[RMDB]
RNA sequence: GGGAACGACUCGAGUAGAGUCGAAAAUGGCGGCGAUGUGGGAUCGGCCGAUCGCCAUGAUCGUCAACGACUGGUUCGGGAUCGGCCCGGACGGGACUCGCUGCCAAGGCGAUUGGCCAGCCCGUCAGUUAGUAGCAGACUUCGGUCUGCUACUAACAAAAGAAACAACAACAACAAC
Reactivity to DMS in 0.01 (KOAc 150mM, MgCl2 10mM, bicine 150mM(pH8.5), 24C), signal-to-noise 2, nucleotides 027 to 126: u030g010g000c000g000g000c090g010a050u020g000u030g000g020g020a190u040c140g050g060c010c010g010a010u000c000g030c000c010a030u010g030a080u040c060g000u000c210a090a050c060g030a030c000u000g000g030u010u000c130g000g000g000a300u030c280g000g000c030c000c000g000g000a030c010g020g020g000a070c090u000c010g010c020u010g000c000c000a050a040g000g030c020g000a170u010u010g010g010c030c000a040g000c000c000c000g000u020c100a050
Reactivity to 2A3 in 0.01 (KOAc 150mM, MgCl2 10mM, bicine 150mM(pH8.5), 24C), signal-to-noise 5, nucleotides 027 to 126: u100g040g010c010g040g000c060g040a050u100g050u170g080g050g070a130u130c060g030g000c010c010g010a000u000c010g000c020c020a030u100g070a170u100c080g130u140c050a080a040c040g020a020c020u130g070g010u070u040c030g060g000g000a140u120c070g260g020c030c010c010g000g010a000c000g010g020g000a070c030u010c020g020c010u000g010c000c000a010a000g020g000c020g120a180u000u050g020g000c000c000a010g010c000c000c000g020u030c000a010